[RMDB]
RNA sequence: GGGAACGACUCGAGUAGAGUCGAAAAACAGCGAAAGGCACAAGACUUCGAACAUUAUAGCAGUUAGUAGUUGCCUAAACCCAUUGCAAUAUAUGGGACACUAGAGGUCGCAAGCCUAUACUGUGCGAAAAGUCGCAAGGUUUCGACCUUGCGACAAACGUUUUUUAUGUUUCGACAUAAAAAACGUAAAAGAAACAACAACAACAAC
Reactivity to DMS in 0.01 (KOAc 150mM, MgCl2 10mM, bicine 150mM(pH8.5), 24C), signal-to-noise 3, nucleotides 027 to 156: a060c030a050g040c040g030a120a130a100g030g020c020a080c090a140a150g010a020c020u010u010c050g000a090a120c090a110u000u000a120u010a080g010c000a050g030u010u000a130g010u010a110g020u000u010g010c010c030u000a040a130a130c010c000c000a020u000u000g000c050a190a170u000a080u010a010u000g000g000g020a110c090a080c080u000a160g010a090g030g030u000c020g000c110a110a120g010c020c010u000a110u030a040c050u000g020u000g020c020g000a040a040a040a130g010u000c000g000c010a010a010g020g020u000u000u010c300g000a040c010c000u000u000g000c000g010a020c020a020a020
Reactivity to 2A3 in 0.01 (KOAc 150mM, MgCl2 10mM, bicine 150mM(pH8.5), 24C), signal-to-noise 4, nucleotides 027 to 156: a020c030a010g020c050g090a230a100a030g010g000c020a030c050a080a000g010a020c010u010u000c030g060a090a070c080a180u160u130a120u200a110g030c030a010g030u030u150a070g030u130a040g030u100u070g030c010c010u030a090a090a090c000c000c010a000u000u030g000c010a030a000u010a000u000a000u160g000g000g020a010c000a000c010u070a030g000a010g010g000u020c010g020c080a030a040g000c000c000u000a010u030a010c010u000g020u040g050c010g040a070a080a080a050g000u010c000g000c000a000a000g020g000u020u100u150c170g000a050c000c010u000u000g000c000g000a000c000a000a010